Description
Structure probing data (DMS and 2A3) for a 177-nucleotide construct.
RNA sequence: GGGAACGACUCGAGUAGAGUCGAAAAAAAACAGUGUUGCACUGCUGCUGUUGAUUUAAGUAUGGAUAAGUUGCGCCGUGUGGAUUGGAAAUCAACCCUACGGUUGUUACUUAUGUUAUGCACAACUCAUGAUAAUAGUGUUCGCACUAUUAUCAUGAAAAGAAACAACAACAACAAC
Reactivity to DMS in 0.01 (KOAc 150mM, MgCl2 10mM, bicine 150mM(pH8.5), 24C), signal-to-noise 5, nucleotides 027 to 126: a050a030a030a020c040a030g010u010g010u010u000g020c040a110c130u010g020c030u000g020c020u000g010u000u000g000a180u010u000u000a060a080g020u000a020u000g000g000a010u000a010a010g010u000u000g000c010g010c000c000g010u000g010u010g010g010a030u000u000g000g000a110a090a130u010c000a010a010c010c000c010u000a020c020g000g010u000u000g040u000u000a000c010u000u000a010u000g000u000u000a010u010g020c010a110c200a070a070c140u000
Reactivity to 2A3 in 0.01 (KOAc 150mM, MgCl2 10mM, bicine 150mM(pH8.5), 24C), signal-to-noise 5, nucleotides 027 to 126: a000a000a000a000c140a070g000u170g080u270u150g020c110a110c180u110g000c020u020g000c000u020g020u040u040g040a190u030u090u130a130a030g010u010a010u040g020g010a000u000a010a000g000u000u020g010c000g000c000c010g000u050g040u070g040g020a090u020u010g030g060a050a180a090u250c000a010a010c010c000c000u010a000c000g000g020u080u120g010u000u030a010c000u000u010a010u030g070u100u040a020u030g010c030a020c030a090a130c030u010

For 2A3, 5,885 sequencing reads were counted. Values are in units of 0.01, from 0 to 300, in steps of 10. It was measured as part of the RMDB library 15KREP.